[RMDB]
RNA sequence: GGGAACGACUCGAGUAGAGUCGAAAAUACGCGAGGUUCGCCUCGCGUAAAAGAGGAGCGUUAACGUGAGCGUACGUAGUGCUGUACAUCGUUCCUACACGAAUGCACAUGGUUUCGACCAUGUGAAGGAGAGAGUUCAGUUCGCUGAACUCUCUCCAAAAGAAACAACAACAACAAC
Reactivity to DMS in 0.01 (KOAc 150mM, MgCl2 10mM, bicine 150mM(pH8.5), 24C), signal-to-noise 2, nucleotides 027 to 126: u000a020c000g000c000g100a000g000g030u000u020c190g040c010c000u010c000g000c000g000u000a000a010a080a140g000a110g010g000a060g000c010g030u000u000a080a030c080g030u000g000a160g000c180g020u000a090c040g000u030a080g040u020g020c030u000g000u010a120c150a150u040c000g000u000u000c000c010u030a100c170a160c230g030a130a180u010g000c020a000c000a010u000g000g000u000u000u020c250g000a010c000c000a000u000g010u000g000a030a050
Reactivity to 2A3 in 0.01 (KOAc 150mM, MgCl2 10mM, bicine 150mM(pH8.5), 24C), signal-to-noise 2, nucleotides 027 to 126: u040a000c010g000c000g000a000g030g010u080u050c130g120c030c000u020c000g010c000g000u000a000a000a000a020g120a000g090g000a010g020c010g000u080u060a080a080c030g020u030g100a070g170c060g040u090a020c030g030u060a020g050u020g110c000u040g030u120a040c020a060u040c010g030u000u000c010c000u030a060c090a000c050g150a090a070u200g040c000a000c000a010u010g020g020u040u090u170c220g050a030c020c000a020u020g000u010g010a040a010
An RNA of 177 nucleotides, treated with DMS and 2A3 and read out base by base. For DMS the reverse transcriptase was MarathonRT. Conditions: 150 mM KOAc, 10 mM MgCl2 and 150 mM bicine (pH 8.5), 24 C. The DMS profile rests on 1,079 reads. The data come from the RNA Mapping Database (RMDB), library M2PK50.